[RMDB]
RNA sequence: GGGAACGACUCGAGUAGAGUCGAAAAGGCGACAAGUUCGCUUGUCGCCACGGGGUCCAGCCUGGAAAGGCUGGAGGUAUUGGAAUGGUCGGGGCGCCAUUCAACGCGGGACAUUCGUGUCCCGCAAUCGUUUACAUGAAUUCGUUCAUGUAAACGAAAAAGAAACAACAACAACAAC
Reactivity to 2A3 in 0.01 (KOAc 150mM, MgCl2 10mM, bicine 150mM(pH8.5), 24C), signal-to-noise 4, nucleotides 027 to 126: g010g010c000g000a000c000a010a000g010u030u070c160g070c110u000u000g000u000c000g000c000c000a000c020g010g000g000g000u010c010c000a000g000c000c010u070g100g120a180a090a020g000g000c000u010g000g030a010g030g010u150a150u120u300g110g010a020a010u010g000g030u060c060g000g000g010g020c030g000c000c000a010u000u010c020a010a030c100g000c010g000g000g010a000c000a010u040u050c210g080u040g000u030c000c000c000g000c000a000a000
Reactivity to DMS in 0.01 (KOAc 150mM, MgCl2 10mM, bicine 150mM(pH8.5), 24C), signal-to-noise 5, nucleotides 027 to 126: g010g010c000g010a000c000a010a010g010u000u010c240g020c010u000u000g010u000c000g020c000c000a000c110g010g000g000g000u000c000c000a000g010c000c000u010g020g030a120a160a020g000g010c000u000g000g000a010g020g000u010a080u010u000g010g010a020a010u000g000g000u000c060g000g000g000g020c090g000c010c010a010u000u000c010a080a070c220g020c000g010g000g000a010c000a040u000u010c170g010u000g010u000c000c000c000g010c010a010a020